[RMDB]
RNA sequence: GGGAACGACUCGAGUAGAGUCGAAAACCUGGUUUAGGGUUCCAGGCUAGCCGUAUCUAUCGGUCGAGAUGCGAGCGCUUAAGCUCAAAUUGAGUGGCUGAGUUAGUGGUGAACGUAUCCCUAUGUUAAAACGGUAGCUGCUUCGGCAGCUACCGAAUCGUAUAGAUUGCUUCGGCAAUCUAUACGAAAAAGAAACAACAACAACAAC
Reactivity to 2A3 in 0.01 (KOAc 150mM, MgCl2 10mM, bicine 150mM(pH8.5), 24C), signal-to-noise 3, nucleotides 027 to 156: c000c000u010g000g010u030u090u120a050g000g010g010u100u000c010c000a010g010g010c020u030a020g010c010c000g020u050a070u060c030u020a060u030c010g040g010u050c040g030a020g000a150u030g020c030g010a010g010c060g010c120u180u300a100a070g000c010u000c020a040a080a030u020u060g050a050g000u240g040g000c010u010g000a010g020u040u070a040g010u060g070g010u050g020a090a020c060g010u070a120u120c000c000c000u020a110u110g080u040u100a030a100a030a040c010g000g010u000a010g000c000u000g000c010u040u030c060g100g000c000a000g000c000u000a000c000c010g000a000a000
Reactivity to DMS in 0.01 (KOAc 150mM, MgCl2 10mM, bicine 150mM(pH8.5), 24C), signal-to-noise 2, nucleotides 027 to 156: c010c000u010g010g020u000u000u000a050g010g010g030u000u000c020c000a060g010g030c020u010a260g010c010c010g010u010a060u020c100u000a110u000c020g030g040u000c030g000a300g000a040u000g000c300g040a060g030c000g000c180u020u020a050a210g030c020u000c010a050a260a150u000u010g010a170g020u010g020g000c040u000g000a080g000u020u020a050g030u000g000g010u070g010a100a110c030g010u000a100u000c020c000c010u000a090u000g000u010u010a060a070a110a180c020g000g020u000a000g000c000u000g000c000u000u000c220g030g020c000a000g010c000u000a010c000c000g010a010a020